[RMDB]
RNA sequence: GGGAACGACUCGAGUAGAGUCGAAAAGCGUACUACCCAUGUGAAAGGCGAGCAACAGCGUACGGGAACUUGCUCCCAAAUAGGAGCAAGGGAACGUACGACAUGCGAGAUGAGUAGCAUGGGUAUCGCAAAACAAUAACAGUUCGCUGUUAUUGAACCGUUGAUUCAUGUUCGCAUGAAUCAACGGAAAAGAAACAACAACAACAAC
Reactivity to 2A3 in 0.01 (KOAc 150mM, MgCl2 10mM, bicine 150mM(pH8.5), 24C), signal-to-noise 2, nucleotides 027 to 156: g000c010g080u090a140c070u020a000c020c000c000a000u000g050u020g040a020a020a030g150g000c030g050a070g000c000a020a100c050a140g080c050g010u000a000c000g000g000g000a030a030c000u000u010g000c000u000c000c000c040a150a300a020u300a030g000g000a000g010c010a010a000g000g000g000a030a000c000g010u030a000c000g020a040c010a010u000g000c000g000a040g000a120u020g000a030g000u000a000g000c000a010u010g010g000g000u010a010u030c000g000c000a010a110a000a000c010a000a000u020a020a000c000a000g020u080u130c190g120c180u000g000u000u000a030u020u000g020a060a100